[RMDB]
RNA sequence: GGGAACGACUCGAGUAGAGUCGAAAAGAUAUGGAUAUGAGGAACGAUAAGUCAUUGGUCGGAAACGACCAUGACUUUUGACGUUCAGCUCAUAUCCUAAGUCAAAAGCCCGCCUUCGGGCGGGCAAGUAAGACGAAUAGUUCGCUAUUCGUCUUACAAAAGAAACAACAACAACAAC
Reactivity to DMS in 0.01 (KOAc 150mM, MgCl2 10mM, bicine 150mM(pH8.5), 24C), signal-to-noise 3, nucleotides 027 to 126: g010a050u000a300u020g000g000a010u000a000u000g000a030g010g000a030a010c010g020a160u000a020a000g000u000c000a020u020u000g030g010u000c020g020g010a120a110a170c010g020a000c000c010a010u000g010a030c000u000u000u000u020g030a190c110g000u000u010c010a120g000c010u000c010a020u000a000u010c000c000u010a010a100g000u010c010a100a180a270a270g000c000c010c000g070c000c020u000u020c220g050g030g060c000g000g000g030c000a000a010
Reactivity to 2A3 in 0.01 (KOAc 150mM, MgCl2 10mM, bicine 150mM(pH8.5), 24C), signal-to-noise 1, nucleotides 027 to 126: g000a000u060a030u110g000g000a020u010a000u030g020a000g060g010a040a030c020g080a110u080a210a010g000u000c010a020u260u280g000g010u000c000g000g030a100a060a050c000g020a010c000c030a000u000g030a000c000u010u000u010u020g080a010c010g000u000u000c020a060g100c000u000c000a000u000a000u000c000c000u000a040a020g040u020c020a000a140a260a170g000c030c020c020g000c040c060u050u030c270g130g020g010c040g090g000g030c000a000a000

Description:
The record gives the reactivity of an RNA of 177 nucleotides to DMS and 2A3. DMS (dimethyl sulfate) methylates the pairing face of unpaired adenines and cytosines. For DMS the reverse transcriptase was MarathonRT. The reactions ran in a buffer of 150 mM KOAc, 10 mM MgCl2 and 150 mM bicine (pH 8.5), at 24 C. The data come from the RNA Mapping Database (RMDB), library TTRDES.